[RMDB]
RNA sequence: GGGAACGACUCGAGUAGAGUCGAAAAUAUUCGUAAACAACAACAGUCGCCUGAACUCCGUGCGUUGCGGUACCAACUCGUAUACGUUGAUCAUAUUGCUGCUCUCGCACUCGACGCGUCUCCGCAUCACGCGCAGCGAUCGCGGAUCACGAGAAGAACUUAGUGCGUUGUUCGCAACGCACUAAGUAAAAGAAACAACAACAACAAC
Reactivity to DMS in 0.01 (KOAc 150mM, MgCl2 10mM, bicine 150mM(pH8.5), 24C), signal-to-noise 2, nucleotides 027 to 156: u000a090u010u010c140g050u000a070a060a110c030a040a040c000a060a130c000a100g010u010c040g010c010c050u000g000a160a130c050u000c030c020g030u000g010c050g010u000u010g000c000g010g000u010a080c040c040a070a090c020u000c020g010u000a080u010a060c010g000u010u000g050a040u010c050a200u000a170u000u000g000c010u000g010c000u000c070u000c010g000c050a140c050u000c030g030a130c020g010c060g060u010c020u020c010c120g000c080a180u000c070a060c040g020c130g060c100a050g040c040g000a020u000c060g040c010g010g010a040u000c040a070c000g010a050g000a130a090g010a090
Reactivity to 2A3 in 0.01 (KOAc 150mM, MgCl2 10mM, bicine 150mM(pH8.5), 24C), signal-to-noise 4, nucleotides 027 to 156: u130a030u030u060c030g010u070a100a080a070c020a050a010c000a040a020c000a090g070u060c050g040c040c000u060g070a040a020c040u030c020c050g010u040g050c020g030u040u040g010c000g030g010u040a070c030c040a000a070c040u040c040g010u060a050u000a080c020g000u050u280g010a020u040c030a050u040a150u160u220g040c010u000g010c000u040c030u050c140g000c030a050c020u080c080g090a040c040g020c020g070u060c060u070c100c050g010c000a060u080c060a010c060g020c020g000c020a000g000c020g030a020u020c000g000c010g030g010a010u040c070a000c040g050a030g040a110a010g020a020

The record gives the reactivity of an RNA of 207 nucleotides to DMS and 2A3. For 2A3, 2,033 sequencing reads were counted. Source: RMDB library OK3TST, as collected in RNAgym.